[RMDB]
RNA sequence: GGGAACGACUCGAGUAGAGUCGAAAACACAUGUUCGCAUGUGUUUGCGUAUGGUGCAAUUGAAAUUUCAUUAGGUUGCCUAAUUUGGGUAACAAGUGCAGUGCGUCCUAGUGGCUCUGAGUGAGGGCCUAAAGGCGUAAUUCGUUACGCCUUUAGGAAAAGAAACAACAACAACAAC
Reactivity to 2A3 in 0.01 (KOAc 150mM, MgCl2 10mM, bicine 150mM(pH8.5), 24C), signal-to-noise 9, nucleotides 027 to 126: c000a000c000a000u010g020u040u060c170g020c100a000u010g000u000g000u000u010u020g000c000g010u050a050u090g160g060u060g030c040a060a070u050u120g100a120a090a120u160u190u080c070a060u060u120a080g020g090u020u020g020c000c010u100a230a300u150u170u300g020g000g000u010a020a000c020a070a030g050u020g030c020a010g020u000g040c010g010u010c000c010u040a060g080u050g110g000c010u000c010u040g040a060g060u110g040a040g010g030g000
Reactivity to DMS in 0.01 (KOAc 150mM, MgCl2 10mM, bicine 150mM(pH8.5), 24C), signal-to-noise 9, nucleotides 027 to 126: c000a010c000a010u000g010u010u040c190g020c010a000u000g010u000g010u000u000u000g000c060g010u010a040u020g010g020u010g010c030a070a090u000u010g000a060a150a110u020u010u010c080a060u010u010a100g010g000u000u000g010c010c010u010a070a140u010u020u020g000g010g010u000a020a050c020a060a070g010u000g010c040a070g010u000g010c010g010u000c020c030u000a080g010u010g000g010c010u000c010u000g010a130g020u020g010a060g000g000g010

Background: The data come from the RNA Mapping Database (RMDB), libraries RFM100 and RFMREP. An RNA of 177 nucleotides, treated with 2A3 and DMS and read out base by base. 2A3 adducts were read by reverse transcription with SuperScript II with manganese. The reactions ran in a buffer of 150 mM KOAc, 10 mM MgCl2 and 150 mM bicine (pH 8.5), at 24 C. DMS adducts were read by reverse transcription with MarathonRT. Reactivities are rounded to 0.1 and cut off at 0 and 3.